[RMDB]
RNA sequence: GGGAACGACUCGAGUAGAGUCGAAAACGACGGCCGUGCUCGGCGUCGUCUGCACGGCGGCCGACGCUGACGCGAGCGCGUUUCCACUCAAUACGCCCGUGCUGCUGACGAACGUCGUCGCCGCGCUCGGCAAGGCCGGCAAGAAAGGCACGCUGCGGGACCUAUACCAAUUCGUUGGUAUAGGUCCAAAAGAAACAACAACAACAAC
Reactivity to 2A3 in 0.01 (KOAc 150mM, MgCl2 10mM, bicine 150mM(pH8.5), 24C), signal-to-noise 2, nucleotides 027 to 156: c020g180a010c050g140g080c000c000g010u030g030c090u000c000g000g020c000g060u010c000g000u000c020u010g050c080a190c300g250g000c000g010g020c020c000g010a010c000g000c000u030g000a020c020g030c010g040a130g030c050g000c000g010u010u020u040c010c000a060c060u150c070a100a160u130a260c040g000c000c010c000g010u020g000c000u010g020c000u060g030a020c020g040a300a110c140g130u060c000g020u030c000g110c000c000g050c000g040c080u130c040g200g000c050a060a020g010g020c000c000g010g000c000a020a040g080a110a080a040g020g000c030a000c000g020c090u090g000c000g020
An RNA of 207 nucleotides, treated with 2A3 and read out base by base. The reactions ran in a buffer of 150 mM KOAc, 10 mM MgCl2 and 150 mM bicine (pH 8.5), at 24 C. 2A3 adducts were read by reverse transcription with SuperScript II with manganese.